[RMDB]
RNA sequence: GGGAACGACUCGAGUAGAGUCGAAAACCAUUGCACUCCGGAUGUGCUGACCCCUGCGAUUUCCCCAAAUGUGGGAAACUCGACUGCAUAAUUUGUGGUAGUGGGGGACUGCGUUCGCGCUUUCCCCGGAAACCUUAUAGUUCGCUAUAAGGUUUCCAAAAGAAACAACAACAACAAC
Reactivity to 2A3 in 0.01 (KOAc 150mM, MgCl2 10mM, bicine 150mM(pH8.5), 24C), signal-to-noise 2, nucleotides 027 to 126: c010c000a010u000u250g040c020a000c020u030c020c040g070g090a060u030g010u020g000c030u050g210a190c000c020c020c070u050g000c030g060a050u010u010u000c020c000c010c010a060a300a150u230g000u250g010g000g000a010a000a010c070u070c040g020a040c030u020g020c000a010u110a230a250u300u090u100g080u110g010g060u050a050g040u110g030g000g000g010g000a000c010u030g000c000g020u040u020c170g020c010g010c080u010u000u010c010c000c010c000
Reactivity to DMS in 0.01 (KOAc 150mM, MgCl2 10mM, bicine 150mM(pH8.5), 24C), signal-to-noise 3, nucleotides 027 to 126: c010c020a190u020u020g020c020a030c020u000c090c040g020g000a080u010g010u000g010c020u000g000a300c030c000c010c020u000g010c040g000a150u000u000u000c000c000c000c020a130a090a170u010g020u010g030g000g000a010a010a010c120u000c020g000a110c030u010g010c010a030u000a080a110u000u000u000g040u000g000g020u010a070g000u000g010g000g010g010g000a020c030u000g010c020g030u000u010c170g020c040g010c020u010u000u000c000c010c000c130